[RMDB]
RNA sequence: GGGAACGACUCGAGUAGAGUCGAAAAGUGCCAGAGAAGUAGUAUAUUGGGCUACCAUCCAGUGAUGCAAUGGAGGCUUAUUAGGGUUGUCAGUUUUCCACAGGGUAGCAAUUAAAACUGUCUGAAAAAAACGAAACCACCUUCGGGUGGUUUCGAACCUAUCAUACUACUUCGGUAGUAUGAUAGGAAAAGAAACAACAACAACAAC
Reactivity to 2A3 in 0.01 (KOAc 150mM, MgCl2 10mM, bicine 150mM(pH8.5), 24C), signal-to-noise 2, nucleotides 027 to 156: g020u030g040c000c010a030g030a000g010a200a000g030u140a000g050u080a130u050a130u230u140g020g070g000c010u020a010c000c010a010u020c000c020a020g020u040g070a070u100g060c030a020a130u050g040g030a020g060g000c050u080u070a070u110u150a240g080g060g000u000u000g000u010c000a010g000u020u010u210u090c010c000a060c040a040g000g040g000u030a010g010c040a040a030u090u110a020a000a000a010c000u000g000u020c000u000g000a080a040a010a000a000a000a000c000g000a000a000a000c000c000a010c000c000u020u060c150g100g000g020u000g000g000u000u000u000c000g000a000a000
Reactivity to DMS in 0.01 (KOAc 150mM, MgCl2 10mM, bicine 150mM(pH8.5), 24C), signal-to-noise 2, nucleotides 027 to 156: g050u020g020c010c030a080g010a150g000a090a130g040u000a050g000u020a100u000a090u000u000g040g030g030c010u000a080c020c000a090u010c030c030a090g020u000g030a130u010g000c060a070a100u000g020g000a230g030g040c050u010u000a050u010u010a130g030g020g030u000u000g000u000c000a050g020u000u000u030u000c010c020a100c040a250g010g010g010u000a040g010c030a020a120u000u020a050a040a080a030c030u000g000u000c000u000g000a000a010a020a090a110a100a160c020g010a000a000a010c000c000a010c000c000u000u000c290g050g060g000u010g010g010u000u000u000c000g010a020a060